[RMDB]
RNA sequence: GGGAACGACUCGAGUAGAGUCGAAAAGAUAUGGAAUAGCUAUGAAGGUGGAUACGUUGAAAUCGGAAACGAUGGAGUAUGCACUGGAGCUAUUCCUAAGUCAAAGUCUAAACUUCGGUUUAGACAAGAGACAAAGAAACUUCGGUUUCUUUGUCUCAAAAGAAACAACAACAACAAC
Reactivity to DMS in 0.01 (KOAc 150mM, MgCl2 10mM, bicine 150mM(pH8.5), 24C), signal-to-noise 2, nucleotides 027 to 126: g000a040u010a300u000g000g000a000a010u000a000g040c000u000a210u020g000a160a200g000g000u010g010g010a010u000a000c020g010u000u000g000a060a110a020u000c010g000g000a130a090a160c010g000a000u000g000g000a110g010u000a010u000g000c000a010c020u000g000g000a020g010c000u000a000u010u000c000c000u000a000a110g000u000c050a110a060a120g000u010c000u010a010a000a010c000u000u020c210g020g000u010u000u000a000g000a000c000a070a050
Reactivity to 2A3 in 0.01 (KOAc 150mM, MgCl2 10mM, bicine 150mM(pH8.5), 24C), signal-to-noise 2, nucleotides 027 to 126: g030a010u060a050u130g000g000a000a020u000a000g000c010u080a180u300g050a040a020g000g020u030g010g180a000u000a020c040g120u300u120g000a040a050a010u020c010g000g000a100a030a030c000g010a000u000g000g020a030g000u020a010u050g220c000a000c010u000g000g010a010g000c010u000a000u000u030c010c000u000a030a000g030u010c050a110a090a050g000u000c010u000a010a010a000c040u050u050c300g100g000u020u000u020a010g000a000c000a000a000